[RMDB]
RNA sequence: GGGAACGACUCGAGUAGAGUCGAAAAUCUUCCCUCCCGCCGUCAGCUGCUUCUUCUUGUUCUCGAGGGCCUUCCUUCUUCGGUGAUCCUGCCUCUCCUUGUCGGUGAAUCCUCCCCUGAGAGGCCUCUUCCUAGGUCCGGAGUCUAUCUCCAUCUGGACUGAAUAUAACUUCGGUUAUAUUCAGUCAAAAGAAACAACAACAACAAC
Reactivity to 2A3 in 0.01 (KOAc 150mM, MgCl2 10mM, bicine 150mM(pH8.5), 24C), signal-to-noise 2, nucleotides 027 to 156: u030c000u010u030c000c010c000u000c050c020c030g040c000c010g090u060c000a030g020c030u030g030c010u040u030c010u060u030c020u040u150g030u050u050c050u020c040g080a050g010g030g040c000c010u050u060c070c000u050u040c020u050u070c010g050g050u050g020a050u060c010c020u050g050c000c000u010c000u020c000c040u060u080g100u080c090g040g030u160g150a070a100u080c030c040u030c020c020c000c020u040g020a060g000a030g090g000c010c000u030c020u020u040c010c020u040a040g000g030u010c080c020g010g000a000g010u000c020u130a090u050c010u000c030c020a090u060c050u080g040
Reactivity to DMS in 0.01 (KOAc 150mM, MgCl2 10mM, bicine 150mM(pH8.5), 24C), signal-to-noise 2, nucleotides 027 to 156: u000c070u010u000c000c010c010u000c020c020c020g010c070c030g020u010c030a120g020c010u010g040c010u000u000c030u000u010c040u000u000g030u000u000c030u010c050g000a200g010g020g030c050c040u010u000c020c030u010u000c050u010u010c060g020g040u000g020a070u000c030c020u000g000c010c020u000c040u010c030c060u000u000g020u010c050g000g050u000g000a170a150u010c020c010u000c040c020c040c120u000g000a180g010a100g050g010c050c030u000c050u010u010c000c020u000a130g030g020u000c000c010g010g010a080g030u010c110u010a200u010c020u010c020c020a160u000c040u000g010